[RMDB]
The record gives the reactivity of an RNA of 207 nucleotides to DMS and 2A3. For DMS, 3,735 sequencing reads were counted. It was measured as part of the RMDB library OK3TST. Reactivities are given for positions 27 through 156. Conditions: 150 mM KOAc, 10 mM MgCl2 and 150 mM bicine (pH 8.5), 24 C. For 2A3 the reverse transcriptase was SuperScript II with manganese. For 2A3, 2,083 sequencing reads were counted.
RNA sequence: GGGAACGACUCGAGUAGAGUCGAAAAAGUGAGGUCUCUUUCUCUUUCACUGGACUUCUGGGGUUGGGACACACAGUUUCCCAGGUGAGAGCAUCUGUUGCCCUUAGCCCUCCACACUUGGUCUUGUCACACUCGAAUCCAGGUGGAAGGCCCUGUCGCCAUAUGUAACAUUCGUGUUACAUAUGGCAAAAGAAACAACAACAACAAC
Reactivity to DMS in 0.01 (KOAc 150mM, MgCl2 10mM, bicine 150mM(pH8.5), 24C), signal-to-noise 1, nucleotides 027 to 156: a080g020u010g010a130g030g000u000c030u000c040u010u000u000c040u000c000u000u000u000c000a080c050u000g010g000a060c050u000u000c040u030g020g030g030g020u000u000g000g000g040a080c040a100c090a110c080a130g020u010u000u000c020c000c030a080g020g010u000g000a070g000a080g040c060a070u000c060u030g020u000u000g020c000c000c040u000u000a110g000c000c000c000u010c020c050a070c000a100c060u010u000g030g020u010c040u000u000g000u000c110a230c150a240c060u000c040g000a100a110u000c010c020a070g000g040u000g000g000a060a020g020g020c000c040c010u000g000u000c080
Reactivity to 2A3 in 0.01 (KOAc 150mM, MgCl2 10mM, bicine 150mM(pH8.5), 24C), signal-to-noise 2, nucleotides 027 to 156: a010g050u040g020a150g000g080u020c020u000c000u070u110u030c040u000c000u020u160u080c090a070c060u090g140g010a090c030u110u050c050u110g010g040g000g020u070u090g020g030g010a010c010a000c010a000c000a060g030u030u030u010c000c000c000a010g050g010u090g020a070g000a020g050c020a080u070c070u130g100u110u110g030c010c020c000u020u060a030g020c000c030c000u000c030c000a010c000a020c010u020u020g000g000u030c000u020u040g060u110c010a060c020a030c120u030c020g020a050a010u000c000c010a010g000g010u010g030g010a020a020g010g010c000c020c000u110g040u160c090